An RNA of 177 nucleotides, treated with DMS and 2A3 and read out base by base. For 2A3, 3,242 sequencing reads were counted. High DMS reactivity at an A or C suggests that its Watson-Crick edge is free. The data come from the RNA Mapping Database (RMDB), library M2PK90. Conditions: 150 mM KOAc, 10 mM MgCl2 and 150 mM bicine (pH 8.5), 24 C. For DMS the reverse transcriptase was MarathonRT. For 2A3 the reverse transcriptase was SuperScript II with manganese.
[RMDB]
RNA sequence: GGGAACGACUCGAGUAGAGUCGAAAAAUAAAGUACUCUCCUGCAGCGUCUGAGGUUUCCGUUGCAGUCCUCGGAACCAGGACCUCGGCGUGGCCUAGCGAGUUAUGGCGACGAAGGCCGUGAAAAAGGAACUAUAAUACUUCGGUAUUAUAGUUCCAAAAGAAACAACAACAACAAC
Reactivity to DMS in 0.01 (KOAc 150mM, MgCl2 10mM, bicine 150mM(pH8.5), 24C), signal-to-noise 4, nucleotides 027 to 126: a090u010a080a060a110g020u000a050c060u000c020u000c040c020u000g000c090a140g010c030g000u000c030u010g020a040g010g010u000u000u000c030c050g020u010u010g010c080a150g000u010c030c040u000c080g010g000a060a070c110c070a180g000g010a050c020c010u000c030g000g010c020g020u010g010g010c020c040u010a100g000c060g010a080g010u010u010a050u000g010g010c040g030a090c070g000a140a110g010g010c000c010g000u020g010a010a080a070a160a110
Reactivity to 2A3 in 0.01 (KOAc 150mM, MgCl2 10mM, bicine 150mM(pH8.5), 24C), signal-to-noise 3, nucleotides 027 to 126: a000u180a010a080a030g060u040a060c000u020c020u000c040c040u040g040c050a050g010c010g020u050c040u180g010a040g050g020u040u090u060c030c020g020u080u090g030c080a050g090u130c010c020u060c000g040g030a030a020c040c010a050g010g050a010c010c010u010c000g010g010c010g020u020g020g010c000c000u030a010g020c020g030a010g020u050u130a160u190g080g010c000g000a100c070g040a110a020g060g000c010c040g040u080g070a060a090a010a000a000